About this RNA:
Chemical mapping of a 177-nucleotide RNA with DMS and 2A3. It was measured as part of the RMDB library OK2TST. The reactions ran in a buffer of 150 mM KOAc, 10 mM MgCl2 and 150 mM bicine (pH 8.5), at 24 C. DMS adducts were read by reverse transcription with MarathonRT. Values cover nucleotides 27 to 126.

RNA sequence: GGGAACGACUCGAGUAGAGUCGAAAAAGAAGAGCAUUUGAAAGCCUUAGCUCGUAAAGGGUAUAUUGAAAUGUUAUCAGGGACAUCUCGCGGUAUUCGUAUCCUUGUUGAAGAUGAAGAGGUUGCCCCGGUAACCAUAUUUCGAUAUGGUUACCGGAAAAGAAACAACAACAACAAC
Reactivity to DMS in 0.01 (KOAc 150mM, MgCl2 10mM, bicine 150mM(pH8.5), 24C), signal-to-noise 3, nucleotides 027 to 126: a090g020a100a090g010a050g030c030a050u010u000u020g030a110a120a150g000c020c010u000u010a110g000c050u010c130g000u000a060a040a070g000g020g020u000a070u010a090u010u000g010a030a030a050u000g000u000u000a060u010c070a080g010g010g000a050c070a040u010c020u000c040g020c100g000g020u000a110u000u010c060g020u000a070u010c030c020u000u020g000u000u000g000a060a090g000a090u010g000a090a090g000a030g000g010u000u000g020c070c050
Reactivity to 2A3 in 0.01 (KOAc 150mM, MgCl2 10mM, bicine 150mM(pH8.5), 24C), signal-to-noise 1, nucleotides 027 to 126: a020g070a020a030g010a010g000c040a050u090u110u210g170a120a040a010g000c020c020u050u010a010g120c000u010c000g010u050a100a080a040g030g020g020u150a060u010a080u130u130g060a020a040a030u030g000u010u080a070u060c040a020g020g020g020a030c030a010u040c020u000c030g000c100g020g000u040a080u120u070c010g000u020a040u060c000c000u040u060g100u120u110g080a080a010g010a090u110g030a060a120g050a010g000g070u070u060g010c030c000